[RMDB]
RNA sequence: GGGAACGACUCGAGUAGAGUCGAAAAUGGCUUAUAAAGUUGCUAUUCACUGCUGCAUUCAUUGGCUGCGUGAACGUUGCAGCAACCUCCUCUUUUGUUCUACCUCGGAGGUUUGGGUUGAUGACCCCCGAGCCUAAUUAUUCGUAAUUAGGCUCGGAAAAGAAACAACAACAACAAC
Reactivity to 2A3 in 0.01 (KOAc 150mM, MgCl2 10mM, bicine 150mM(pH8.5), 24C), signal-to-noise 5, nucleotides 027 to 126: u060g040g020c070u110u070a040u100a200a160a050g030u110u050g030c000u010a020u040u020c010a030c050u160g000c000u010g030c010a060u040u180c070a100u130u210g090g000c020u030g010c010g000u010g030a040a020c070g150u080u100g000c000a000g000c020a010a020c000c000u050c020c000u030c060u020u110u130u150g110u080u050c050u110a190c030c030u030c030g020g000a030g010g000u000u030u030g010g000g010u000u070g040a090u070g090a140c000c010c000
Reactivity to DMS in 0.01 (KOAc 150mM, MgCl2 10mM, bicine 150mM(pH8.5), 24C), signal-to-noise 3, nucleotides 027 to 126: u020g000g010c040u000u010a070u040a100a140a120g000u010u000g010c020u000a190u020u000c050a080c060u000g030c010u020g000c010a040u010u030c180a080u040u040g000g000c000u000g020c050g030u010g000a020a010c230g000u010u000g020c030a000g000c010a060a070c010c010u000c000c000u040c030u020u030u010u020g010u000u020c060u000a080c130c070u000c110g010g010a060g000g000u000u010u000g000g000g010u000u000g000a120u020g000a210c070c020c020

Conditions: 150 mM KOAc, 10 mM MgCl2 and 150 mM bicine (pH 8.5), 24 C. Structure probing data (2A3 and DMS) for a 177-nucleotide construct. The DMS profile rests on 5,791 reads. It was measured as part of the RMDB library OK1LIB. For 2A3 the reverse transcriptase was SuperScript II with manganese. DMS adducts were read by reverse transcription with MarathonRT. Reactivities are rounded to 0.1 and cut off at 0 and 3.